[RMDB]
This 207-nucleotide RNA was probed chemically with 2A3 and DMS.
The data come from the RNA Mapping Database (RMDB), library M2RFPK.
In probing experiments dimethyl sulfate is read out at A N1 and C N3, which are open when not base-paired.
For 2A3 the reverse transcriptase was SuperScript II with manganese.
The RNA was probed in 150 mM KOAc, 10 mM MgCl2 and 150 mM bicine (pH 8.5) at 24 C.
RNA sequence: GGGAACGACUCGAGUAGAGUCGAAAAGGGUGUUGUCUCCUAACCUUUAUCAAUGGGGGCACUCGGUCGUGCUGUGGGUAGAAAUUUUAUUUCGUGCCUACCUUAGACGCUUGUCGUCGGGAGUAUGUGGGACUGAUGAACUUCGGUUCAUCAGUAAGAUAAGUCAUAGUUUCGACUAUGACUUAUCAAAAGAAACAACAACAACAAC
Reactivity to 2A3 in 0.01 (KOAc 150mM, MgCl2 10mM, bicine 150mM(pH8.5), 24C), signal-to-noise 8, nucleotides 027 to 156: g050g020g000u060g020u080u070g030u040c020u020c030c000u040a090a120c010c020u110u180u160a260u190c130a120a110u120g010g000g000g000g000c010a020c010u030c030g050g010u030c010g030u040g040c080u070g000u040g020g000g000u020a020g120a010a030a030u150u240u140u150a130u040u120u080c050g040u100g000c000c000u020a040c010c000u020u080a040g010a010c000g020c060u100u220g100u240c030g010u000c000g000g050g000a060g040u090a060u160g050u130g010g020g020a010c000u000g000a000u000g000a000a000c000u040u060c220g060g000u000u000c000a000u000c000a000g000u000a000a020
Reactivity to DMS in 0.01 (KOAc 150mM, MgCl2 10mM, bicine 150mM(pH8.5), 24C), signal-to-noise 4, nucleotides 027 to 156: g000g000g020u010g030u000u010g010u000c030u000c010c030u000a070a100c060c040u000u010u000a130u020c100a090a150u010g020g010g000g030g050c030a050c030u000c050g020g020u000c080g030u000g010c060u000g010u000g010g040g030u000a300g010a030a030a090u000u000u010u000a080u010u020u000c030g010u010g020c010c000u000a050c010c110u010u000a150g010a050c030g010c050u000u000g030u000c020g020u000c000g010g010g010a150g010u000a050u000g010u010g010g010g010a090c000u000g000a010u000g000a040a020c000u000u020c300g050g010u000u000c000a000u000c000a010g030u000a030a100